An RNA of 177 nucleotides, treated with DMS and 2A3 and read out base by base. Values cover nucleotides 27 to 126. For DMS, 5,491 sequencing reads were counted. 2A3 is a SHAPE reagent: it acylates the 2'-hydroxyl of flexible nucleotides of all four kinds. 2A3 adducts were read by reverse transcription with SuperScript II with manganese. Conditions: 150 mM KOAc, 10 mM MgCl2 and 150 mM bicine (pH 8.5), 24 C. The data come from the RNA Mapping Database (RMDB), library TTRDEL.

RNA sequence: GGGAACGACUCGAGUAGAGUCGAAAAGAUAUGGAGAGUUAUACCUGAGCGUUGAAAUCGGAAACGAUGGAGCUCUGGUAAUUCUCUCCUAAGUCAAAAGAUACAGUAAGUUCGCUUACUGUAUCAACACUCUGAAUUAGUUCGCUAAUUCAGAGUGAAAAGAAACAACAACAACAAC
Reactivity to DMS in 0.01 (KOAc 150mM, MgCl2 10mM, bicine 150mM(pH8.5), 24C), signal-to-noise 5, nucleotides 027 to 126: g000a050u000a300u000g000g000a010g010a020g010u010u000a210u000a020c010c010u000g010a010g020c010g010u000u010g000a110a150a020u010c000g010g000a160a100a190c010g010a010u000g000g000a120g020c010u000c000u000g020g000u000a010a300u000u010c000u010c000u000c000c000u000a020a100g000u000c030a070a060a150a060g010a010u000a000c000a000g000u000a000a010g010u010u020c260g000c000u000u000a010c000u000g000u000a000u000c010a090a170
Reactivity to 2A3 in 0.01 (KOAc 150mM, MgCl2 10mM, bicine 150mM(pH8.5), 24C), signal-to-noise 4, nucleotides 027 to 126: g020a000u060a030u170g000g000a020g010a010g030u260u030a160u020a300c000c020u010g000a000g000c020g220u300u050g010a030a050a000u010c010g010g000a090a030a020c010g000a010u020g000g030a020g000c000u000c010u010g000g000u010a010a060u070u000c010u000c000u000c000c000u010a100a020g030u010c000a070a010a050a100g000a000u000a010c010a000g010u010a020a010g010u020u120c230g040c170u010u000a000c000u000g000u000a000u000c000a010a000